[RMDB]
RNA sequence: GGGAACGACUCGAGUAGAGUCGAAAACUCAGUGUGUCUGAUCAUAUAAAGAUACUCUGGUGGCCAGCCGCUCUUGCUGGUCUGUCUUUGUCAAAUUACUCGGAGUAUCUCCAUCGCGGCACAGCGGUAGGCGCUACAUAUUCGUAUGUAGCGCCUAAAAAGAAACAACAACAACAAC
Reactivity to DMS in 0.01 (KOAc 150mM, MgCl2 10mM, bicine 150mM(pH8.5), 24C), signal-to-noise 2, nucleotides 027 to 126: c040u000c030a140g010u000g030u000g000u010c020u000g000a060u000c160a130u020a110u010a160a180a020g000a010u000a010c000u000c000u000g000g030u030g010g000c020c010a020g020c020c300g030c180u010c110u000u000g000c000u000g010g000u000c010u000g010u000c110u000u020u020g000u020c190a030a030a060u000u000a070c100u010c020g020g000a020g000u000a030u000c020u000c090c100a040u000c080g030c070g010g020c010a000c010a040g020c060g010g010
Reactivity to 2A3 in 0.01 (KOAc 150mM, MgCl2 10mM, bicine 150mM(pH8.5), 24C), signal-to-noise 2, nucleotides 027 to 126: c020u040c040a040g080u000g000u000g000u020c020u110g030a090u110c060a100u210a030u090a300a200a000g000a000u000a000c000u000c010u010g080g000u040g020g010c010c000a000g010c020c040g190c110u130c040u170u150g000c010u010g020g060u000c050u030g060u050c060u090u240u180g250u170c090a090a170a190u180u060a080c050u060c150g000g000a000g000u000a030u000c000u000c000c000a050u080c040g000c070g040g000c000a000c000a030g010c050g030g050
Chemical mapping of a 177-nucleotide RNA with DMS and 2A3. It was measured as part of the RMDB library OK2TST. DMS adducts were read by reverse transcription with MarathonRT.